[RMDB]
RNA sequence: GGGAACGACUCGAGUAGAGUCGAAAAUAUUAUUGUACCAAUACGGGUCGUCGGAUGUCAAUCCAGCUGUUGCUGCACCAGAAAUCACAAAUAGUGGUAGCAGUGAUGCAACGGUUUUCGCCUAUAACCUGAUUUAUCGGUUCGCCGAUAAAUCAGGAAAAGAAACAACAACAACAAC
Reactivity to DMS in 0.01 (KOAc 150mM, MgCl2 10mM, bicine 150mM(pH8.5), 24C), signal-to-noise 2, nucleotides 027 to 126: u000a100u010u010a060u000u000g030u020a170c030c030a120a120u020a080c080g000g000g000u000c020g020u000c060g010g000a040u000g000u010c260a150a090u000c030c030a090g000c020u000g000u000u000g010c000u000g040c030a020c020c020a130g020a060a090a010u000c080a030c100a170a080a090u000a180g000u020g000g000u000a050g030c220a060g020u000g000a130u000g000c000a010a040c050g000g030u000u000u030u000c100g000c050c040u000a090u020a070a180
Reactivity to 2A3 in 0.01 (KOAc 150mM, MgCl2 10mM, bicine 150mM(pH8.5), 24C), signal-to-noise 2, nucleotides 027 to 126: u180a020u150u130a040u090u120g050u090a020c030c000a020a030u140a060c030g030g000g000u010c020g010u030c020g010g010a010u030g110u180c130a090a030u020c020c000a010g000c030u020g030u020u030g000c010u050g060c010a010c020c010a050g110a060a100a040u040c000a020c020a010a300a160u170a160g020u010g040g020u020a000g020c030a000g020u020g020a040u030g010c030a010a010c000g000g000u020u040u070u040c060g040c010c000u090a120u090a160a060